[RMDB]
RNA sequence: GGGAACGACUCGAGUAGAGUCGAAAAUUAAUCUAACAGAUGAAAGAGGGGGACGAAUAUGGCUCUCACUCACCCGAGCCGGUGACUUAGUGUUGGGAACUGUGGCCAUAGAAGGACUCACCUCUGGAAGCAAUACCAUCUCAUAUUCUACUCCCAGAUGUAGUGAUAACUUCGGUUAUCACUACAUAAAAGAAACAACAACAACAAC
Reactivity to DMS in 0.01 (KOAc 150mM, MgCl2 10mM, bicine 150mM(pH8.5), 24C), signal-to-noise 2, nucleotides 027 to 156: u020u010a130a110u010c050u020a150a150c110a160g000a100u010g000a210a090a080g000a050g020g010g020g030g000a140c100g000a110a240u000a040u000g000g030c000u020c000u010c020a140c030u000c010a040c020c000c030g020a020g120c000c060g000g000u000g000a020c030u000u010a010g020u000g000u010u010g010g010g000a110a090c120u000g020u000g000g100c000c010a070u000a070g010a140a110g000g000a210c020u000c020a030c020c020u000c030u010g000g010a050a040g010c040a070a110u000a120c090c010a060u000c010u010c010a090u010a130u000u000c030u010a040c020u000c010c020c000a030g000
Reactivity to 2A3 in 0.01 (KOAc 150mM, MgCl2 10mM, bicine 150mM(pH8.5), 24C), signal-to-noise 2, nucleotides 027 to 156: u040u020a010a040u020c040u070a050a110c010a060g040a080u040g020a090a160a030g000a050g030g000g000g000g010a000c000g030a120a030u010a000u010g000g010c000u030c010u010c060a010c010u010c000a010c010c030c050g090a010g110c190c040g060g030u100g000a030c080u150u200a060g010u040g050u150u150g020g000g050a070a040c080u100g010u080g100g000c000c000a000u000a010g140a110a040g000g070a120c010u000c030a220c000c000u020c000u000g010g000a070a020g030c010a000a060u020a290c010c000a030u010c020u010c030a020u040a090u270u030c020u040a070c030u100c030c010c040a050g020
An RNA of 207 nucleotides, treated with DMS and 2A3 and read out base by base. For DMS, 2,376 sequencing reads were counted.